[RMDB]
This 177-nucleotide RNA was probed chemically with DMS and 2A3. In probing experiments dimethyl sulfate is read out at A N1 and C N3, which are open when not base-paired. The 2A3 profile rests on 2,222 reads. For DMS, 6,597 sequencing reads were counted. It was measured as part of the RMDB library OK2TRN. Conditions: 150 mM KOAc, 10 mM MgCl2 and 150 mM bicine (pH 8.5), 24 C.

RNA sequence: GGGAACGACUCGAGUAGAGUCGAAAAUGUGUAGCCUGUAGGAGUGUGAGGAGUGAGGUCGGGAUGUACCUCGUGUCCUUGGGGCAUCCUGUCCUAGCAGCUGGUGGUUGGAGUGGAAGCUCAAGCAGUAUCUUUCGCUAUUCGUAGCGAAAGAUACAAAAGAAACAACAACAACAAC
Reactivity to DMS in 0.01 (KOAc 150mM, MgCl2 10mM, bicine 150mM(pH8.5), 24C), signal-to-noise 4, nucleotides 027 to 126: u010g020u000g010u000a090g000c060c010u010g010u000a060g010g010a060g000u010g020u010g010a080g000g010a150g010u010g010a040g000g020u000c010g000g010g010a050u000g000u010a100c010c000u010c150g010u010g010u010c050c060u010u010g000g000g000g010c010a020u000c000c010u000g010u000c020c010u000a100g010c070a090g000c070u000g010g020u000g010g000u000u000g000g010a070g010u000g000g020a080a130g000c050u000c080a070a100g020c160a120
Reactivity to 2A3 in 0.01 (KOAc 150mM, MgCl2 10mM, bicine 150mM(pH8.5), 24C), signal-to-noise 2, nucleotides 027 to 126: u160g020u000g000u030a030g020c000c060u070g100u060a000g000g050a090g030u080g000u040g040a050g020g020a050g020u120g040a010g020g000u030c000g010g000g020a020u030g030u270a300c000c010u020c030g050u080g060u050c020c050u050u120g000g000g000g000c000a000u000c000c000u020g030u030c000c010u000a020g030c010a010g000c010u070g020g050u040g020g060u080u100g040g000a040g030u100g010g010a060a020g020c010u000c050a040a030g020c000a020